[RMDB]
RNA sequence: GGGAACGACUCGAGUAGAGUCGAAAAUUCCCCAGCCAGGGAUAAUCAUCCUCGAGUCUCUUGAUGGUCUUCCUGGCCUUCCGGAGAUCUCUCUCGAGCUCCUCCGCCUUUCUUCUUGUUGAGAUCCAUUUCUCGAGGAUCUCCUCCCUUGUUCCCCCGUAGAAGAGAUCUUCGGAUCUCUUCUACGAAAAGAAACAACAACAACAAC
Reactivity to 2A3 in 0.01 (KOAc 150mM, MgCl2 10mM, bicine 150mM(pH8.5), 24C), signal-to-noise 1, nucleotides 027 to 156: u030u030c040c000c020c020a020g000c020c020a020g030g020g050a030u070a180a010u140c010a030u010c020c090u070c080g080a130g050u080c060u060c080u270u240g010a020u020g030g000u000c030u110u030c020c020u050g000g000c000c000u060u000c020c020g000g000a030g010a060u020c020u000c010u080c050u090c150g010a010g000c020u070c000c010u010c050c050g080c030c020u090u230u160c030u120u060c030u090u220g080u090u100g060a000g000a000u000c010c010a060u100u230u130c120u140c180g060a090g000g000a000u000c000u010c000c000u010c010c000c010u000u060g020u040u030c000c000c000c000